[RMDB]
RNA sequence: GGGAACGACUCGAGUAGAGUCGAAAAUCGCGAGCUCGGGGCGGUGUUCGUGGCAACGGUGUAGGUCCUCGAUGAUCUCGUCGCGUUGCGACGCCGGCAGCGACUCGAUCUUGCUGUACAGAUCGGAGUACUCUGCGAGUUUCGACUCGCAGAGUACAAAAGAAACAACAACAACAAC
Reactivity to 2A3 in 0.01 (KOAc 150mM, MgCl2 10mM, bicine 150mM(pH8.5), 24C), signal-to-noise 2, nucleotides 027 to 126: u070c090g000c010g000a000g070c020u000c010g000g070g000g030c040g040g170u000g000u230u000c020g040u010g110g030c000a000a000c040g030g020u020g070u200a060g010g000u060c050c000u230c190g210a300u200g000a010u010c000u000c020g110u040c040g000c040g090u020u020g010c050g010a020c000g070c080c060g010g050c000a000g070c000g040a040c010u040c020g010a010u020c010u030u090g060c110u100g050u120a020c000a090g020a060u020c020g050g000a040
Reactivity to DMS in 0.01 (KOAc 150mM, MgCl2 10mM, bicine 150mM(pH8.5), 24C), signal-to-noise 1, nucleotides 027 to 126: u000c110g110c000g000a000g020c270u000c000g060g140g000g000c000g020g000u000g000u040u000c040g020u010g000g030c000a060a080c030g070g040u000g060u010a000g000g020u000c040c000u130c300g100a220u000g000a000u000c000u000c000g000u000c000g110c140g000u000u000g040c020g060a050c040g070c300c300g010g010c000a130g000c020g040a000c000u010c000g000a030u000c000u000u030g030c000u070g030u000a080c300a090g000a190u000c020g050g000a270